[RMDB]
RNA sequence: GGGAACGACUCGAGUAGAGUCGAAAAAAAGGAGGCUGGGUUUUGCGAUCUUUAAGCAGAUGGCAGGUUCACCCCGUACGGUGCGGAAGUUCGCGCUUCCGUGAAACGCGAAAAUCGGACGGUGGCUAAGACCAAUAACAGUUCGCUGUUAUUGGAACACACUGAAACUGUUCGCAGUUUCAGUGUGAAAAGAAACAACAACAACAAC
Reactivity to 2A3 in 0.01 (KOAc 150mM, MgCl2 10mM, bicine 150mM(pH8.5), 24C), signal-to-noise 3, nucleotides 027 to 156: a000a000a000g030g000a030g030g020c030u030g040g020g040u040u030u070u050g030c020g020a050u030c030u040u130u090a130a030g020c050a030g010a050u050g040g000c020a020g000g040u070u090c020a050c010c010c010c000g010u020a020c060g000g000u010g020c000g000g020a010a020g020u090u190c130g000c010g010c100u010u010c020c000g000u000g040a090a110a010c120g020c020g110a140a030a000a040u040c020g000g000a010c010g020g080u090g020g000c010u060a110a000g010a060c000c000a000a000u010a000a000c000a000g030u080u060c150g070c060u000g000u020u000a010u000u000g000g000a020a000
Reactivity to DMS in 0.01 (KOAc 150mM, MgCl2 10mM, bicine 150mM(pH8.5), 24C), signal-to-noise 1, nucleotides 027 to 156: a020a050a020g030g010a070g040g050c020u000g020g040g000u000u020u030u050g060c010g000a090u010c050u010u010u020a080a130g030c080a060g000a120u000g020g020c030a040g000g000u000u010c050a080c000c000c020c060g010u010a050c060g000g000u000g010c010g020g040a090a080g010u000u000c190g020c190g010c000u000u010c020c080g000u000g020a030a020a050c020g020c040g000a030a060a100a070u010c060g040g020a080c030g000g000u000g010g060c020u010a050a110g000a120c000c010a000a020u010a010a030c020a050g020u000u020c260g020c050u010g030u010u000a040u000u000g010g000a000a230